[RMDB]
The record gives the reactivity of an RNA of 177 nucleotides to DMS and 2A3. The RNA was probed in 150 mM KOAc, 10 mM MgCl2 and 150 mM bicine (pH 8.5) at 24 C. It was measured as part of the RMDB libraries RFM100 and RFMREP. For 2A3 the reverse transcriptase was SuperScript II with manganese. 2A3 is a SHAPE reagent: it acylates the 2'-hydroxyl of flexible nucleotides of all four kinds. For DMS the reverse transcriptase was MarathonRT.
RNA sequence: GGGAACGACUCGAGUAGAGUCGAAAAGAAAGAAUGUGGAUCAAUGAUGUUAUUGAUUUUACUGCGUUAUCUUCCUGCAUCUAACAAUGAAAUGAAGAUAAAUGUUUUACACCCUGAGAUCCAUUAAGAAGUUGCACAAUUUCGAUUGUGCAACUUCAAAAGAAACAACAACAACAAC
Reactivity to DMS in 0.01 (KOAc 150mM, MgCl2 10mM, bicine 150mM(pH8.5), 24C), signal-to-noise 3, nucleotides 027 to 126: g010a140a020a030g020a060a060u010g000u000g000g010a000u000c000a090a070u040g020a090u020g020u020u020a080u000u000g000a070u010u020u030u020a090c040u020g000c020g030u000u000a000u000c020u000u020c000c200u000g010c020a000u000c040u010a190a150c300a170a030u000g020a030a140a050u000g000a020a020g000a040u000a030a020a020u000g000u010u000u000u010a090c160a110c010c000c010u000g000a190g020a010u010c050c010a020u030u030a060a130
Reactivity to 2A3 in 0.01 (KOAc 150mM, MgCl2 10mM, bicine 150mM(pH8.5), 24C), signal-to-noise 3, nucleotides 027 to 126: g170a010a070a000g100a030a130u250g010u010g020g010a000u010c010a000a020u100g110a040u130g110u190u180a070u120u090g070a110u070u080u070u150a140c090u020g020c000g020u010u000a000u020c000u010u000c010c010u030g050c010a020u000c030u100a060a090c040a090a040u100g010a130a120a060u100g000a000a000g010a010u030a040a100a040u060g040u000u010u000u110a010c040a050c000c010c000u000g020a020g010a060u030c000c000a000u000u040a020a020